Overview:
This 177-nucleotide RNA was probed chemically with DMS and 2A3. DMS adducts were read by reverse transcription with MarathonRT. For 2A3, 3,215 sequencing reads were counted. The reactions ran in a buffer of 150 mM KOAc, 10 mM MgCl2 and 150 mM bicine (pH 8.5), at 24 C. It was measured as part of the RMDB library OK2TRN. For DMS, 3,012 sequencing reads were counted.

[RMDB]
RNA sequence: GGGAACGACUCGAGUAGAGUCGAAAAACAUCUCACAGGCACACUCGAGAGACAAUGUGAGAAAGUUGGCCAGGCUGAGAAAGUCCACUUGGACUCAGGCGGGGUCCAAGCCUUGGCCUCAGCUUCCGCAAAGACUCUUAUUCGUAAGAGUCUUUGCAAAAGAAACAACAACAACAAC
Reactivity to DMS in 0.01 (KOAc 150mM, MgCl2 10mM, bicine 150mM(pH8.5), 24C), signal-to-noise 3, nucleotides 027 to 126: a020c060a150u000c000u000c000a010c010a040g010g010c180a090c080a120c060u000c040g010a100g010a220g010a040c060a080a110u000g020u000g010a000g010a020a060a090g040u010u000g000g000c040c040a060g020g010c020u000g000a030g010a140a090a090g000u000c010c180a130c040u000u000g000g000a020c010u010c050a110g010g010c240g020g000g010g000u000c000c000a020a020g000c090c070u000u000g010g010c130c010u000c000a010g000c000u000u000c150c150
Reactivity to 2A3 in 0.01 (KOAc 150mM, MgCl2 10mM, bicine 150mM(pH8.5), 24C), signal-to-noise 2, nucleotides 027 to 126: a010c000a040u020c000u010c000a020c000a010g100g000c260a050c010a020c140u120c120g180a090g000a010g020a130c040a080a120u030g000u010g010a010g000a060a130a030g020u040u030g040g000c020c030a040g020g000c000u000g000a000g040a110a120a010g060u060c010c000a000c000u000u010g000g000a010c000u020c030a060g210g170c210g030g070g010g000u000c020c000a000a020g010c010c030u040u080g000g000c000c000u000c000a000g000c000u040u030c040c070